RNA sequence: GGGAACGACUCGAGUAGAGUCGAAAAAAAAUCCAUUCAUGGUUAACCAAUUGGCUUAUAGCUCUAGUGCAAAUGGCAGCCUGGUUGGCACAACUUUGCAGGGCAAGCCUAUUGGUAUGUUCUUCCCCCAUCGGAACGUUCGCGUUCCGAAAAAGAAACAACAACAACAAC
Reactivity to DMS in 0.01 (KOAc 150mM, MgCl2 10mM, bicine 150mM(pH8.5), 24C), signal-to-noise 1, nucleotides 027 to 129: a000a000a000a000u080c020c050a080u050u050c250a090u020g000g050u030u000a000a000c010c000a010a090u050u000g020g000c050u000u000a150u040a250g040c010u020c050u000a070g000u040g060c050a040a010a000u060g010g000c030a130g040c020c000u030g040g030u060u060g010g060c030a050c000a180a060c100u000u020u000g000c030a070g010g000g020c000a000a000g010c010c000u040a010u110u000g020g000u020a030u030g010u010u000c050u000u000c000c020c020c020c060a090
Reactivity to 2A3 in 0.01 (KOAc 150mM, MgCl2 10mM, bicine 150mM(pH8.5), 24C), signal-to-noise 4, nucleotides 027 to 129: a000a000a000a010u030c000c000a020u050u140c080a060u190g010g050u020u080a010a010c000c000a010a000u000u030g020g010c000u030u030a060u120a270g000c000u010c020u060a070g180u030g040c000a000a010a010u050g060g090c090a040g020c000c010u130g170g090u130u280g060g010c000a030c000a090a070c010u030u030u000g000c040a020g030g030g000c000a030a000g000c000c010u010a000u000u000g000g000u020a070u060g030u010u000c000u010u020c000c000c010c000c000a010